Structure probing data (DMS) for a 177-nucleotide construct. The reactions ran in a buffer of 150 mM KOAc, 10 mM MgCl2 and 150 mM bicine (pH 8.5), at 24 C. For DMS the reverse transcriptase was MarathonRT.
RNA sequence: GGGAACGACUCGAGUAGAGUCGAAAAAUUGUUGCCAAGACAAAAUGGUAAGAGUGCUAUCGAAGACUUGCUGUUUAACAAAGUUGUUACUAGUGGCCUUGGCACUGUUGACCAGGACUAUAAGAAGCCUCUGCUAAGAGUUCGCUCUUAGCAGAGGAAAAGAAACAACAACAACAAC
Reactivity to DMS in 0.01 (KOAc 150mM, MgCl2 10mM, bicine 150mM(pH8.5), 24C), signal-to-noise 1, nucleotides 027 to 126: a010u000u010g010u000u010g010c030c050a050a020g010a090c050a090a120a080a080u010g010g040u010a070a030g010a090g010u010g010c110u000a120u020c110g000a120a100g000a070c010u000u000g010c030u000g000u000u000u010a070a060c060a020a140a070g010u010u010g010u000u000a060c040u020a110g010u000g000g020c070c000u000u000g000g000c010a020c050u020g000u000u000g010a140c040c020a110g000g000a110c110u020a130u010a060a120g020a110a170g000